RNA sequence: GGGAACGACUCGAGUAGAGUCGAAAAGAAAAUACAAGGCUGACAUAAUCCUUUCCCAACCUCCACGUGGUGUCGGCUGGAUAAUGCAUUAGAAAUGUUGCAUUUAUCAACUGGGAAGGCAAAAAAACCCUAAAGACAUGUUCGCAUGUCUUUAGGGAAAAGAAACAACAACAACAAC
Reactivity to DMS in 0.01 (KOAc 150mM, MgCl2 10mM, bicine 150mM(pH8.5), 24C), signal-to-noise 2, nucleotides 027 to 126: g020a150a060a040a080u020a060c070a080a090g010g000c020u000g010a020c010a040u000a110a150u020c020c000u000u000u000c010c000c030a050a110c010c000u000c020c030a100c070g030u010g020g010u000g010u000c000g020g020c030u020g040g000a020u000a010a010u010g010c010a010u010u000a040g010a110a080a090u000g010u000u010g000c000a000u000u010u000a010u000c010a010a040c140u000g010g000g020a030a040g010g060c300a000a000a070a060a020a010a050
Reactivity to 2A3 in 0.01 (KOAc 150mM, MgCl2 10mM, bicine 150mM(pH8.5), 24C), signal-to-noise 2, nucleotides 027 to 126: g000a010a040a010a000u160a030c030a070a120g020g000c010u000g010a000c000a010u090a050a220u150c000c000u010u050u010c000c020c000a000a010c000c000u030c040c030a110c100g120u140g010g020u010g000u010c000g010g010c000u000g000g010a000u010a010a010u010g000c010a010u000u140a100g160a120a130a060u150g030u040u000g010c000a010u040u050u160a020u020c010a000a020c000u000g000g000g000a010a000g010g000c040a080a000a000a010a000a080a100